[RMDB]
Overview: The record gives the reactivity of an RNA of 177 nucleotides to 2A3 and DMS.
RNA sequence: GGGAACGACUCGAGUAGAGUCGAAAAAGUCAGAAUCCGUGCUAGAUACAAUGACCUUGUCCCGCGCAUUUACCGUUGUGUCGAAAUAAGGCGUAAGCCUGUGAACCAUUAUAAGCGAUUGAUUGUGCAAGUGUAACAAGUUCGCUUGUUACACUUGAAAAGAAACAACAACAACAAC
Reactivity to 2A3 in 0.01 (KOAc 150mM, MgCl2 10mM, bicine 150mM(pH8.5), 24C), signal-to-noise 2, nucleotides 027 to 126: a000g000u030c000a000g050a030a030u030c030c010g100u150g020c010u130a090g000a110u020a170c060a060a100u110g010a070c000c060u060u060g040u050c030c000c010g000c000g020c010a140u090u150u120a060c020c040g050u040u110g070u050g000u090c010g010a060a050a090u170a030a030g020g000c000g020u060a090a010g010c020c010u000g020u020g010a000a010c000c000a030u040u110a110u110a150a060g050c030g060a060u070u110g110a150u040u030g020u020g090
Reactivity to DMS in 0.01 (KOAc 150mM, MgCl2 10mM, bicine 150mM(pH8.5), 24C), signal-to-noise 6, nucleotides 027 to 126: a070g010u010c020a020g010a140a050u000c030c080g020u010g010c130u010a090g020a040u000a070c090a070a090u000g000a060c060c050u000u000g010u000c010c010c000g010c110g010c050a060u000u000u000a050c110c050g020u000u000g020u010g010u000c040g000a080a120a070u010a070a020g000g000c010g030u010a110a130g020c000c010u000g020u000g000a090a110c060c040a070u010u010a090u010a090a090g010c030g010a070u010u000g000a070u000u000g020u000g000
The 2A3 profile rests on 1,694 reads. The DMS profile rests on 8,368 reads. 2A3 is a SHAPE reagent: it acylates the 2'-hydroxyl of flexible nucleotides of all four kinds.